[RMDB]
RNA sequence: GGGAACGACUCGAGUAGAGUCGAAAAGCAUUUCUUCACUCACUGCGCCAAAUAGAGCCGUAACAACCUUAGUGUCCAACUCGUGCAUCAGUGCUGAAGAUGCAGCGCUUGACGCCGAAGCUCUACCGUGGUACUACGCGUUCGCGCGUAGUACCACAAAAGAAACAACAACAACAAC
Reactivity to 2A3 in 0.01 (KOAc 150mM, MgCl2 10mM, bicine 150mM(pH8.5), 24C), signal-to-noise 2, nucleotides 027 to 126: g030c000a030u080u070u000c000u090u080c040a030c030u060c000a050c000u010g020c000g030c000c040a110a020a040u090a040g070a010g020c040c000g110u060a070a010c030a010a090c000c030u100u120a060g060u030g050u020c010c010a030a030c030u010c020g100u160g010c000a040u030c010a010g000u020g080c020u030g020a090a050g170a160u210g040c010a000g000c080g000c000u120u160g020a010c030g000c000c000g000a030a020g010c020u040c020u030a080c030c040
Reactivity to DMS in 0.01 (KOAc 150mM, MgCl2 10mM, bicine 150mM(pH8.5), 24C), signal-to-noise 1, nucleotides 027 to 126: g030c060a100u000u010u000c040u010u000c050a040c120u010c010a030c060u000g010c020g000c050c090a080a100a120u020a080g020a070g010c000c060g000u010a110a040c050a050a060c060c050u000u010a050g030u000g000u010c030c030a040a180c060u010c030g030u000g040c000a140u000c030a090g000u000g000c150u010g030a130a150g000a040u010g030c010a000g000c020g010c020u000u010g010a030c060g040c030c020g000a060a050g020c080u000c010u000a040c080c090

This 177-nucleotide RNA was probed chemically with 2A3 and DMS. DMS adducts were read by reverse transcription with MarathonRT. Values cover nucleotides 27 to 126. For 2A3, 1,598 sequencing reads were counted. The reactions ran in a buffer of 150 mM KOAc, 10 mM MgCl2 and 150 mM bicine (pH 8.5), at 24 C. High DMS reactivity at an A or C suggests that its Watson-Crick edge is free. Values are in units of 0.01, from 0 to 300, in steps of 10.